This 177-nucleotide RNA was probed chemically with DMS and 2A3.
RNA sequence: GGGAACGACUCGAGUAGAGUCGAAAAGAGGCAUUACUAGUCAGUGCGACGUACCUUGACGGUACUGGAUUUCGCCCUUGGGUUAGGUUCGUCAGCAGGACUUAGCGGUAGUUUCCAAUUGGGCACAGGCAUACGGUCAAUUCGUUGACCGUAUGCCAAAAGAAACAACAACAACAAC
Reactivity to DMS in 0.01 (KOAc 150mM, MgCl2 10mM, bicine 150mM(pH8.5), 24C), signal-to-noise 1, nucleotides 027 to 126: g010a190g000g100c030a090u000u020a060c010u010a100g020u020c040a080g020u020g010c040g000a140c000g000u000a000c030c020u000u010g080a090c010g050g010u000a000c090u000g030g000a160u040u000u010c030g030c000c000c070u000u020g010g000g000u000u030a030g000g000u000u000c040g000u020c150a110g050c010a160g000g000a050c000u000u020a050g020c020g010g030u000a030g030u000u000u000c000c010a220a080u050u000g000g000g020c040a130c090a160
Reactivity to 2A3 in 0.01 (KOAc 150mM, MgCl2 10mM, bicine 150mM(pH8.5), 24C), signal-to-noise 2, nucleotides 027 to 126: g120a000g020g000c010a000u050u160a110c060u020a010g010u200c040a010g160u040g060c000g050a050c030g050u080a060c000c000u010u110g180a100c100g000g010u030a010c000u080g040g050a020u110u070u010c090g000c000c000c000u000u070g120g000g000u050u030a000g010g000u010u010c000g010u000c030a060g010c000a000g000g010a030c040u060u000a000g020c050g110g000u170a110g030u030u000u070c000c000a050a060u050u110g020g000g020c020a020c040a030
The data come from the RNA Mapping Database (RMDB), library OK1LIB. Conditions: 150 mM KOAc, 10 mM MgCl2 and 150 mM bicine (pH 8.5), 24 C. For DMS, 1,632 sequencing reads were counted.